Structure probing data (DMS) for a 177-nucleotide construct. The RNA was probed in 150 mM KOAc, 10 mM MgCl2 and 150 mM bicine (pH 8.5) at 24 C. Source: RMDB library OK2TST, as collected in RNAgym.
RNA sequence: GGGAACGACUCGAGUAGAGUCGAAAAGAUUAUAAUACUUAUUACCCAUUUCGGCGGCUAAUAAGGAAUCUGCUAAGAUAGGUAAAUGUACAAUACCAUCAAUGGCUUCUAAAAGUUUUCAAAGAAGUGGUGAUUAUAGUUUCGACUAUAAUCACCAAAAAGAAACAACAACAACAAC
Reactivity to DMS in 0.01 (KOAc 150mM, MgCl2 10mM, bicine 150mM(pH8.5), 24C), signal-to-noise 2, nucleotides 027 to 126: g000a070u010u000a180u020a160a180u000a230c000u000u000a030u000u000a030c170c010c020a200u000u020u010c200g020g000c140g000g000c300u010a000a000u000a010a020g010g020a060a060u010c020u010g020c030u000a100a170g000a010u000a050g030g000u000a020a060a120u000g020u030a170c220a110a170u020a060c020c020a060u000c040a050a100u000g020g000c020u010u010c030u020a050a070a100a130g000u000u000u020u020c080a070a080a120g000a120a090g010